[RMDB]
RNA sequence: GGGAACGACUCGAGUAGAGUCGAAAACCGGAGUAGUUCGCUACUCCGGAAAUAAAAUCAGCGGUAAUUCGACCGCAAAUAUUACCGCUGAUGCGGUCGAAAAAACUGCCAAGUUCGCUUGGCAGAAUCGUUAAUCCAUGUUCGCAUGGAUUAACGAAAAAGAAACAACAACAACAAC
Reactivity to DMS in 0.01 (KOAc 150mM, MgCl2 10mM, bicine 150mM(pH8.5), 24C), signal-to-noise 1, nucleotides 027 to 126: c020c000g020g000a030g020u000a000g010u000u010c220g030c000u000a000c000u000c010c000g000g000a010a040a050u000a050a100a100a030u000c050a010g020c000g000g000u000a020a040u000u010c140g000a110c160c120g030c050a080a030a040u000a110u000u010a030c010c000g000c000u010g000a030u000g000c060g000g040u000c060g020a000a080a050a070a120a080c010u000g030c000c000a000a000g030u000u010c110g000c010u010u010g010g000c010a000g000a010a050
Reactivity to 2A3 in 0.01 (KOAc 150mM, MgCl2 10mM, bicine 150mM(pH8.5), 24C), signal-to-noise 1, nucleotides 027 to 126: c010c000g000g000a010g000u020a000g000u040u130c200g000c170u010a000c000u000c010c010g000g020a010a020a000u030a010a130a010a010u050c020a010g000c020g010g010u040a010a090u160u030c060g090a100c090c070g060c110a030a000a000u050a000u010u020a020c020c000g000c020u000g000a000u020g000c030g030g090u110c040g000a170a000a000a020a020a080c000u000g000c010c010a030a000g000u010u100c240g030c150u020u010g020g010c000a010g000a020a030